[RMDB]
RNA sequence: GGGAACGACUCGAGUAGAGUCGAAAAAUAAAGAGCGUACAUCUCUCUCAGACUGUACGACAGACUGACUCUCUCGUACAAUCGCUCAACGAGAGAGAGAGAGCGUUCAAAGAAGCGAGAAAAAAAACUAAAUUGAACAGUUCGCUGUUCAAUUUAGAAAAGAAACAACAACAACAAC
Reactivity to 2A3 in 0.01 (KOAc 150mM, MgCl2 10mM, bicine 150mM(pH8.5), 24C), signal-to-noise 2, nucleotides 027 to 126: a030u150a000a100a020g000a000g000c010g010u040a000c060a190u000c000u000c000u010c000u000c000a010g000a030c000u020g010u000a020c000g000a000c020a000g010a020c050u150g100a190c010u030c000u000c000u000c030g010u020a010c000a000a050u020c020g010c080u180c140a050a110c140g040a070g010a000g000a000g010a000g000a000g010a130g020c000g000u000u000c030a040a070a010g090a040a010g100c110g060a050g150a200a040a030a000a000a020a000a010
Reactivity to DMS in 0.01 (KOAc 150mM, MgCl2 10mM, bicine 150mM(pH8.5), 24C), signal-to-noise 2, nucleotides 027 to 126: a040u000a070a080a120g000a020g000c010g010u000a070c150a210u000c000u010c000u010c020u010c020a300g010a030c030u000g010u010a000c020g010a010c080a010g000a070c190u020g000a200c140u020c000u000c170u000c000g000u010a020c000a020a040u000c000g030c250u000c300a070a040c200g000a030g000a030g010a010g030a030g000a070g030a240g030c020g010u000u000c020a070a100a080g010a040a060g000c080g020a020g060a010a000a000a080a070a070a020a140